[RMDB]
RNA sequence: GGGAACGACUCGAGUAGAGUCGAAAAGAUAUGGAGUACGCUGCCGAUAAGAAUCAUAUCGGAAACGAUAUAUUCUUUUGACGGCAUUGUACUCCUAAGUCAAAACACAGCGUGUUCGCACGCUGUGCGUACUGUAUUACUUCGGUAAUACAGUACGAAAAGAAACAACAACAACAAC
Reactivity to 2A3 in 0.01 (KOAc 150mM, MgCl2 10mM, bicine 150mM(pH8.5), 24C), signal-to-noise 9, nucleotides 027 to 126: g010a000u030a010u060g000g000a010g000u000a000c020g000c050u010g010c010c030g140a220u170a300a000g000a000a010u070c170a010u080a000u010c000g000g030a020a010a000c000g000a000u000a000u000a010u020u020c030u040u100u110u300g300a300c090g000g000c000a000u010u020g000u000a000c000u000c000c000u000a000a000g000u000c010a030a050a110a050c010a000c000a000g010c010g000u040g100u150u210c300g030c150a000c000g000c000u000g000u000g020
Reactivity to DMS in 0.01 (KOAc 150mM, MgCl2 10mM, bicine 150mM(pH8.5), 24C), signal-to-noise 9, nucleotides 027 to 126: g000a020u010a160u010g000g000a010g020u000a000c000g010c120u000g020c000c000g020a120u020a010a010g000a020a010u000c300a010u000a000u000c000g020g010a030a030a060c000g010a010u000a000u000a030u000u000c000u000u000u000u000g010a190c100g010g010c000a000u000u000g010u000a000c000u000c000c000u000a000a060g010u000c010a120a100a110a300c010a010c000a000g010c000g030u000g010u010u020c300g030c000a010c010g010c000u000g010u000g000